[RMDB]
RNA sequence: GGGAACGACUCGAGUAGAGUCGAAAAGGGGAAAAAAUGAGAAGCCACAUCCUUCACUGCGGUGGCCAACAGACAGAAGGGCGUGCCUCGCAGCUCCCUACUAGCUAAUGUACAUAACGCGGGAGACAUAUUUACGGAUGUUCGCAUCCGUAAAUAUAAAAGAAACAACAACAACAAC
Reactivity to DMS in 0.01 (KOAc 150mM, MgCl2 10mM, bicine 150mM(pH8.5), 24C), signal-to-noise 6, nucleotides 027 to 126: g000g010g010g000a010a040a050a040a050a090u020g000a070g010a100a090g020c090c030a040c050a090u020c030c010u000u000c090a110c050u000g000c100g010g010u000g000g020c040c040a100a140c070a030g010a080c200a080g000a100a060g020g000g030c100g000u010g010c040c010u000c040g000c090a040g020c060u010c000c000c000u010a090c090u000a070g000c090u020a050a060u010g000u010a070c150a090u030a050a040c100g010c050g000g000g010a060g010a110c180
Reactivity to 2A3 in 0.01 (KOAc 150mM, MgCl2 10mM, bicine 150mM(pH8.5), 24C), signal-to-noise 9, nucleotides 027 to 126: g050g010g000g030a070a050a040a030a030a080u240g040a110g040a120a010g030c040c010a020c010a050u050c020c000u060u080c040a050c070u050g010c040g110g020u090g060g030c020c010a050a030c020a020g190a020c020a040g090a050a040g040g010g010c030g020u050g020c000c010u030c020g020c010a020g010c010u020c000c000c000u050a080c020u020a030g060c030u080a100a060u160g050u120a050c040a130u160a160a050c080g010c030g030g010g040a040g020a020c060